The data come from the RNA Mapping Database (RMDB), libraries RFM100 and RFMREP. An RNA of 177 nucleotides, treated with DMS and 2A3 and read out base by base. The reactions ran in a buffer of 150 mM KOAc, 10 mM MgCl2 and 150 mM bicine (pH 8.5), at 24 C. For 2A3 the reverse transcriptase was SuperScript II with manganese. For DMS the reverse transcriptase was MarathonRT.
RNA sequence: GGGAACGACUCGAGUAGAGUCGAAAAAAUGGAUAUUGGGUUUUAUGAAGAUUGCAGAAUACAGGCAAUUCACUAUGAACGAUUGUUAAUUUUGUUGGUGCAUCCUUGCUCUGUCUAUAUAGGUGGCAAGCAUACGAAUAUUCGUAUUCGUAUGCUUAAAAGAAACAACAACAACAAC
Reactivity to DMS in 0.01 (KOAc 150mM, MgCl2 10mM, bicine 150mM(pH8.5), 24C), signal-to-noise 8, nucleotides 027 to 126: a060a040u010g000g010a040u000a060u010u010g010g000g000u010u010u010u010a060u020g010a100a090g010a070u000u010g000c020a060g010a110a080u020a070c160a080g010g000c030a020a020u010u000c050a090c120u010a060u020g010a070a070c120g000a060u010u000g010u010u000a060a070u010u010u010u000g010u010u000g000g020u010g000c050a060u000c040c010u000u000g000c030u000c030u000g000u010c040u000a050u010a080u010a060g010g010u010g010g010c140
Reactivity to 2A3 in 0.01 (KOAc 150mM, MgCl2 10mM, bicine 150mM(pH8.5), 24C), signal-to-noise 4, nucleotides 027 to 126: a020a000u140g050g040a070u060a120u040u090g030g010g020u060u040u060u040a160u100g040a040a040g060a110u030u130g000c010a000g070a160a030u100a080c040a050g040g040c000a000a010u060u020c030a030c050u120a080u190g050a070a020c070g120a110u050u070g030u070u080a110a220u050u100u040u070g070u010u060g000g020u050g000c020a020u100c010c000u020u030g000c000u020c000u050g090u020c030u010a070u010a010u020a080g090g000u010g060g010c010